[RMDB]
RNA sequence: GGGAACGACUCGAGUAGAGUCGAAAAGAUAUGGACGACGGCACGACAUGCCUUACGAUCGGAAACGAUCGGAGGCAACAGCGUGUCCGUCGUCCUAAGUCAAAACAAAGUCCUUCGGGACUUUGAAGUAUAUCCAAAACUUCGGUUUUGGAUAUACAAAAGAAACAACAACAACAAC
Reactivity to DMS in 0.01 (KOAc 150mM, MgCl2 10mM, bicine 150mM(pH8.5), 24C), signal-to-noise 4, nucleotides 027 to 126: g010a080u000a300u010g010g000a010c010g020a020c000g020g000c020a010c000g010a080c130a300u000g020c010c000u000u000a080c010g000a020u010c000g000g000a140a120a150c000g010a010u010c000g000g000a010g000g030c000a020a040c300a210g000c010g000u000g020u030c000c010g010u000c000g000u000c000c000u010a000a070g000u000c040a090a050a110a280c010a000a000a000g000u000c000c000u000u010c200g050g020g010a000c010u000u000u000g010a060a130
Reactivity to 2A3 in 0.01 (KOAc 150mM, MgCl2 10mM, bicine 150mM(pH8.5), 24C), signal-to-noise 3, nucleotides 027 to 126: g030a030u100a040u140g020g000a000c010g010a000c000g000g000c020a010c030g270a120c110a170u180g030c000c050u010u070a300c010g000a010u010c010g020g040a070a020a040c000g000a010u010c000g010g000a000g000g000c000a070a010c030a030g200c010g010u010g010u010c000c000g000u010c000g000u010c000c000u000a000a000g000u000c010a000a000a030a060c010a000a010a010g000u000c000c000u060u110c300g100g000g000a000c000u000u000u020g000a020a000